[RMDB]
RNA sequence: GGGAACGACUCGAGUAGAGUCGAAAAGGAGUGCCGCGAUUAGGGCACUGACCGGCGCAGCCAGCGCAAGUACUCUCGGUCACCGAGCAGUUCCAGACGACGCCACAGCACGGGGUUGUCGGCGGACACGACACGAGCUAUUCGUAGCUCGUGUCGUAAAAGAAACAACAACAACAAC
Reactivity to 2A3 in 0.01 (KOAc 150mM, MgCl2 10mM, bicine 150mM(pH8.5), 24C), signal-to-noise 2, nucleotides 027 to 126: g080g000a000g000u000g010c000c020g290c120g170a180u170u300a170g000g050g000c000a010c010u000g040a060c000c000g000g000c000g000c030a090g100c070c030a070g000c000g000c020a030a000g040u070a030c030u030c050u040c040g000g160u120c030a010c070c000g000a010g030c010a050g000u010u020c000c000a020g010a030c010g000a000c000g020c040c000a060c000a070g080c020a030c180g080g000g040g030u030u210g030u010c000g000g040c000g060g000a010c010
Reactivity to DMS in 0.01 (KOAc 150mM, MgCl2 10mM, bicine 150mM(pH8.5), 24C), signal-to-noise 3, nucleotides 027 to 126: g000g000a040g020u000g060c010c000g000c190g000a300u000u040a110g010g000g010c040a000c000u010g000a140c040c000g000g060c000g000c060a090g030c070c090a230g010c040g080c020a020a120g000u020a030c090u020c010u000c030g030g050u000c100a210c100c010g000a000g030c300a160g000u000u010c000c010a050g010a060c070g000a030c050g010c000c000a050c180a140g000c150a160c120g000g000g000g010u000u000g000u000c020g020g020c030g020g000a100c120
The data come from the RNA Mapping Database (RMDB), library OK1LIB. This 177-nucleotide RNA was probed chemically with 2A3 and DMS. For 2A3, 1,652 sequencing reads were counted. Conditions: 150 mM KOAc, 10 mM MgCl2 and 150 mM bicine (pH 8.5), 24 C. Values are in units of 0.01, from 0 to 300, in steps of 10. Reactivities are given for positions 27 through 126.